Description
The data come from the RNA Mapping Database (RMDB), library M2PK50. This 177-nucleotide RNA was probed chemically with DMS and 2A3. The 2A3 profile rests on 2,272 reads. DMS adducts were read by reverse transcription with MarathonRT. In probing experiments dimethyl sulfate is read out at A N1 and C N3, which are open when not base-paired.
RNA sequence: GGGAACGACUCGAGUAGAGUCGAAAACUCCAUUGCUUCGGCAAUGGAGAAACAGGACGUGAGACCGAAACGGAGGAAGGUCCAACUACCUUCUCACAAAAAAAACGCUUAGGUUCGCCUAAGCGAACGGCAUACAAAGGUUCGCCUUUGUAUGCCGAAAAGAAACAACAACAACAAC
Reactivity to DMS in 0.01 (KOAc 150mM, MgCl2 10mM, bicine 150mM(pH8.5), 24C), signal-to-noise 1, nucleotides 027 to 126: c000u010c000c000a010u020u000g000c000u040u000c230g090g000c000a000a000u000g000g040a010g000a000a010a060c220a160g010g000a090c110g000u000g000a250g000a050c000c000g000a110a050a180c230g000g000a040g010g050a150a120g030g000u000c020c000a050a090c060u000a100c100c030u000u000c000u020c060a100c170a000a030a000a040a040a000a100a210c040g000c000u000u000a000g020g010u010u000c140g000c000c000u000a000a000g000c000g020a060a040
Reactivity to 2A3 in 0.01 (KOAc 150mM, MgCl2 10mM, bicine 150mM(pH8.5), 24C), signal-to-noise 2, nucleotides 027 to 126: c010u000c000c000a020u020u000g000c000u050u030c230g110g010c020a010a010u020g010g010a010g000a000a000a000c060a000g000g050a000c070g140u030g020a070g030a010c020c030g070a220a200a020c110g030g060a060g060g060a080a040g070g040u000c010c020a030a030c020u090a050c010c020u040u000c010u000c000a040c060a000a030a000a050a010a010a010a030c000g000c000u000u000a010g000g020u060u040c170g100c010c000u000a010a000g000c000g000a020a010